This 177-nucleotide RNA was probed chemically with 2A3 and DMS. The 2A3 profile rests on 1,728 reads. The data come from the RNA Mapping Database (RMDB), library OK2TRN. For DMS, 2,042 sequencing reads were counted. The RNA was probed in 150 mM KOAc, 10 mM MgCl2 and 150 mM bicine (pH 8.5) at 24 C.
RNA sequence: GGGAACGACUCGAGUAGAGUCGAAAAUGGUCACAAGCGGUCAGCUGCCGUUGCAGCGCAUAUCGAGAAGCAGCGGUCACCGCAGUCCAGAUGCCGCUGACGCCCGGCUACGGUGAGACCCCGCUUCCCACUUUGCUAGUUUCGACUAGCAAAGUGGAAAAGAAACAACAACAACAAC
Reactivity to 2A3 in 0.01 (KOAc 150mM, MgCl2 10mM, bicine 150mM(pH8.5), 24C), signal-to-noise 2, nucleotides 027 to 126: u080g010g020u050c050a040c060a140a070g000c010g030g050u100c100a040g020c090u060g020c000c050g140u070u130g000c030a060g040c000g100c070a040u090a100u280c100g060a040g050a250a010g020c030a000g010c080g050g010u090c050a030c020c030g000c030a000g030u000c010c010a020g030a100u100g030c000c020g060c010u060g020a030c020g090c010c010c020g050g000c010u010a010c010g000g000u010g050a040g020a050c010c000c020c030g040c000u080u080c020
Reactivity to DMS in 0.01 (KOAc 150mM, MgCl2 10mM, bicine 150mM(pH8.5), 24C), signal-to-noise 3, nucleotides 027 to 126: u000g020g020u000c050a120c150a080a090g000c020g000g000u010c170a150g000c040u010g000c010c130g000u000u010g020c020a060g020c080g010c150a060u000a090u010c090g000a140g010a070a080g000c050a010g020c050g000g010u010c060a040c010c020g030c030a080g010u000c030c040a090g020a100u000g000c010c020g010c060u000g020a110c100g010c040c080c040g000g000c030u010a030c070g000g020u000g000a120g000a110c050c040c030c020g000c090u000u000c070